An RNA of 177 nucleotides, treated with DMS and 2A3 and read out base by base. For DMS, 1,437 sequencing reads were counted. The RNA was probed in 150 mM KOAc, 10 mM MgCl2 and 150 mM bicine (pH 8.5) at 24 C. For DMS the reverse transcriptase was MarathonRT. For 2A3 the reverse transcriptase was SuperScript II with manganese.
RNA sequence: GGGAACGACUCGAGUAGAGUCGAAAAGACCGUCAGUUAGACGGAAGAAGUGCAUAAAUCCACAGCGGAAGACAAGAUACUGCACAAAUGUGGAUAAGCGUACGGAUCUACGUGCGCUAAACGUGAGCACUGGACUGGACUUCGGUCCAGUCCAGUGAAAAGAAACAACAACAACAAC
Reactivity to DMS in 0.01 (KOAc 150mM, MgCl2 10mM, bicine 150mM(pH8.5), 24C), signal-to-noise 2, nucleotides 027 to 126: g000a140c000c000g000u000c000a070g050u010u020a130g000a020c000g000g000a040a150g000a100a020g010u070g110c070a100u040a170a180a020u000c000c000a010c040a200g000c000g020g000a100a070g000a160c200a160a090g030a170u020a120c000u000g000c090a050c180a120a020a220u010g030u000g000g000a010u000a120a120g020c000g080u000a010c120g000g010a300u010c180u100a090c000g000u000g000c000g050c000u000a000a020a020c170g020u030g070a070g020
Reactivity to 2A3 in 0.01 (KOAc 150mM, MgCl2 10mM, bicine 150mM(pH8.5), 24C), signal-to-noise 2, nucleotides 027 to 126: g200a000c000c000g000u080c000a090g000u070u210a050g030a000c080g040g010a040a070g080a090a000g020u200g030c070a010u030a120a300a000u060c000c000a000c000a000g000c000g150g060a000a000g070a100c030a070a070g020a020u200a160c000u000g000c000a000c020a010a290a060u150g000u000g000g000a000u010a110a080g000c000g020u000a060c000g000g000a050u060c020u070a050c020g000u000g000c010g000c000u000a000a000a000c000g090u050g140a010g000